RNA sequence: GGGAACGACUCGAGUAGAGUCGAAAAAAAGGGUCAAGGAGUUAUUAUCGCUUGCUGGCACUACUCAUUUGUAAAGUAAAAAUCCACUAGUAGUCUCGGUAAUAAACAUGGUGGGAAGGUAACAUAGUACGUUAGAUGCUUUCGAGCAUCUAACGUAAAAAGAAACAACAACAACAAC
Reactivity to DMS in 0.01 (KOAc 150mM, MgCl2 10mM, bicine 150mM(pH8.5), 24C), signal-to-noise 2, nucleotides 027 to 126: a060a040a060g010g010g000u000c100a070a120g010g020a080g020u000u000a040u000u000a050u000c050g010c240u010u000g020c110u000g010g000c140a060c000u000a020c020u000c080a140u010u000u000g010u030a070a080a090g010u020a000a080a060a100a110u000c040c030a060c080u000a060g020u000a030g000u000c030u010c070g010g020u000a070a040u010a020a060a060c070a090u000g000g010u000g020g020g000a060a050g000g010u000a040a050c050a040u000a130g000
Description: The record gives the reactivity of an RNA of 177 nucleotides to DMS. Values are in units of 0.01, from 0 to 300, in steps of 10. It was measured as part of the RMDB library OK2TRN. Conditions: 150 mM KOAc, 10 mM MgCl2 and 150 mM bicine (pH 8.5), 24 C. For DMS the reverse transcriptase was MarathonRT.